[RMDB]
RNA sequence: GGGAACGACUCGAGUAGAGUCGAAAAUCAGCUGAAUGCGCUGCACUUCGGGGUGUGGGCCAAACUCCUCCAUGUAUUCCUUCAGCCCCUUGUCCACCACAGCCAUGUAUCGGAUGUACCAUAAUAACGCAUCUCUAUCCGCCGCCGUCUUGGGCCGGACACGUAUAUCUUUCGAGAUAUACGUGUCAAAAGAAACAACAACAACAAC
Reactivity to 2A3 in 0.01 (KOAc 150mM, MgCl2 10mM, bicine 150mM(pH8.5), 24C), signal-to-noise 4, nucleotides 027 to 156: u070c000a020g020c030u070g060a170a080u130g050c080g010c070u050g010c020a020c060u070u090c070g000g020g020g010u070g010u090g010g070g000c070c040a060a100a130c080u080c010c010u010c030c010a070u110g030u050a100u020u120c010c000u020u090c020a030g050c000c010c010c000u030u050g030u000c000c000a020c000c010a030c030a010g030c020c010a090u090g040u070a050u110c030g010g000a040u040g020u040a080c050c050a070u100a220a070u100a200a050c050g010c010a060u000c010u010c030u130a070u050c010c020g030c010c020g020c010c010g070u050c050u030u050g020g020g000c020c020g000
Reactivity to DMS in 0.01 (KOAc 150mM, MgCl2 10mM, bicine 150mM(pH8.5), 24C), signal-to-noise 1, nucleotides 027 to 156: u000c000a090g010c020u000g010a070a080u000g020c030g040c040u000g010c060a080c050u000u010c080g010g010g010g020u000g020u010g080g030g040c010c070a090a080a120c030u000c000c010u000c020c050a080u000g020u030a140u000u000c010c020u000u020c060a180g010c020c000c000c040u000u010g010u000c030c020a130c040c020a050c050a040g000c000c020a120u010g010u010a070u020c060g040g020a070u010g010u000a060c070c050a040u010a090a110u000a060a070c110g000c050a010u000c010u000c050u000a070u000c000c020g000c010c020g060c010c020g010u000c040u000u000g010g020g030c040c000g010